[RMDB]
Background:
Structure probing data (DMS and 2A3) for a 177-nucleotide construct. The reactions ran in a buffer of 150 mM KOAc, 10 mM MgCl2 and 150 mM bicine (pH 8.5), at 24 C. For DMS, 646 sequencing reads were counted. Values cover nucleotides 27 to 126. For DMS the reverse transcriptase was MarathonRT.
RNA sequence: GGGAACGACUCGAGUAGAGUCGAAAAGAUAUGGAGACUUCAUAACGUUGAGUAGUGAGUCGGAAACGACUCUCCUACAAUGAUGUAUCAAAGUCUCCUAAGUCAAAGGGAUACUUCGGUAUCCCAAGAUUUGCCGUAAGUUCGCUUACGGCAAAUCAAAAGAAACAACAACAACAAC
Reactivity to DMS in 0.01 (KOAc 150mM, MgCl2 10mM, bicine 150mM(pH8.5), 24C), signal-to-noise 1, nucleotides 027 to 126: g030a040u000a300u000g000g000a000g020a030c000u010u020c100a140u000a220a050c010g000u010u000g000a300g020u000a000g010u010g000a040g000u000c000g010g000a050a030a220c000g020a010c000u000c000u020c300c010u010a060c010a070a030u020g000a020u000g000u000a020u000c230a100a040a020g000u000c000u000c000c000u000a010a040g020u010c000a120a140a030g000g030g000a040u000a000c000u000u040c170g020g010u000a010u000c000c010c000a010a030
Reactivity to 2A3 in 0.01 (KOAc 150mM, MgCl2 10mM, bicine 150mM(pH8.5), 24C), signal-to-noise 1, nucleotides 027 to 126: g020a040u090a030u100g010g000a000g020a010c000u030u080c070a140u040a300a050c010g060u060u110g170a080g040u020a000g000u040g030a020g020u010c000g010g080a030a040a020c010g020a000c000u070c010u050c070c010u020a040c020a100a070u300g060a030u060g000u110a030u090c100a120a040a010g000u060c000u050c000c000u010a090a020g040u050c050a030a120a080g000g000g020a000u000a010c010u020u140c300g110g000u020a000u050c000c000c010a000a000